[RMDB]
Chemical mapping of a 177-nucleotide RNA with DMS. For DMS, 929 sequencing reads were counted.
RNA sequence: GGGAACGACUCGAGUAGAGUCGAAAAGCAAGAGCGUUCGCGCUCUUGCAAAGAAAAUGCGUCGAAAGGGUGAGGAUGGGAAGGACGCAAAACCCACACCCAAAACACUCUGCUUCGGCAGAGUGAACUUAGACACGUUCUUCGGAACGUGUCUAAGAAAAGAAACAACAACAACAAC
Reactivity to DMS in 0.01 (KOAc 150mM, MgCl2 10mM, bicine 150mM(pH8.5), 24C), signal-to-noise 1, nucleotides 027 to 126: g000c000a000a000g000a040g020c000g010u000u000c150g050c030g000c000u000c000u020u010g000c000a090a060a060g010a090a060a080a100u000g000c000g010u000c000g000a140a120a140g030g000g000u000g000a090g010g030a130u000g000g000g010a150a150g000g000a030c020g000c030a100a040a130a080c000c000c020a200c040a040c010c010c000a120a030a110a100c010a010c000u000c000u000g000c000u000u030c250g020g000c000a000g000a000g000u000g000a080a100